Structure probing data (2A3 and DMS) for a 177-nucleotide construct. For 2A3 the reverse transcriptase was SuperScript II with manganese.

RNA sequence: GGGAACGACUCGAGUAGAGUCGAAAAUCUUUGUAGAAGCUAGACUUCUCACAGUGCCUGGAAGCAUAAUAUGGACUCAACUAUAUUUACGGAGCCAAUUACUAAAUGAUGAUACUCAUGGUGCCUACGUCAUAAGAAGUUUCGACUUCUUAUGACGAAAAGAAACAACAACAACAAC
Reactivity to 2A3 in 0.01 (KOAc 150mM, MgCl2 10mM, bicine 150mM(pH8.5), 24C), signal-to-noise 6, nucleotides 027 to 126: u020c010u030u050u120g040u130a030g000a040a000g010c070u110a060g100a300c000u030u010c010u010c000a030c000a020g060u040g030c000c000u030g060g030a060a020g040c020a020u040a080a030u080a180u090g020g060a110c010u020c050a070a170c050u100a060u040a120u300u210u130a070c090g050g010a000g000c020c010a020a030u090u040a080c060u100a060a110a140u140g030a030u040g020a040u060a090c010u010c040a030u070g020g020u020g010c010c010u050a050
Reactivity to DMS in 0.01 (KOAc 150mM, MgCl2 10mM, bicine 150mM(pH8.5), 24C), signal-to-noise 5, nucleotides 027 to 126: u000c040u000u000u000g020u000a040g010a060a050g000c030u010a100g010a230c020u000u000c010u000c060a070c100a060g030u000g020c030c040u010g010g010a080a150g010c050a050u010a020a040u000a070u010g030g010a100c140u010c140a050a120c070u030a060u000a050u010u010u000a070c170g020g010a070g020c020c020a040a060u000u000a060c110u000a040a070a080u010g010a040u000g000a140u000a030c080u000c020a050u000g010g000u000g010c040c020u010a150